[RMDB]
RNA sequence: GGGAACGACUCGAGUAGAGUCGAAAAGAUAUGGAACCUGUUGAACUACUGCUCUGUCGGAAACGACAGGGAGGCAGCAAUGGUUCCUAAGUCAAAACUAGGGCGAGUACUUCGGUACUCGCCCUAGGAUGACUGUCAACUUCGGUUGACAGUCAUCAAAAGAAACAACAACAACAAC
Reactivity to DMS in 0.01 (KOAc 150mM, MgCl2 10mM, bicine 150mM(pH8.5), 24C), signal-to-noise 1, nucleotides 027 to 126: g020a050u000a300u000g010g000a030a010c000c010u010g060u000u010g010a170a120c090u030a140c000u000g000c040u000c000u010g010u010c000g040g010a150a080a250c000g010a010c000a010g010g000g010a090g010g000c040a000g010c030a010a020u000g020g000u000u000c000c000u010a030a050g000u000c010a140a150a100a300c000u000a000g010g000g000c020g020a000g020u000a000c000u000u000c270g020g020u000a030c010u000c000g000c000c010c010u000a000g000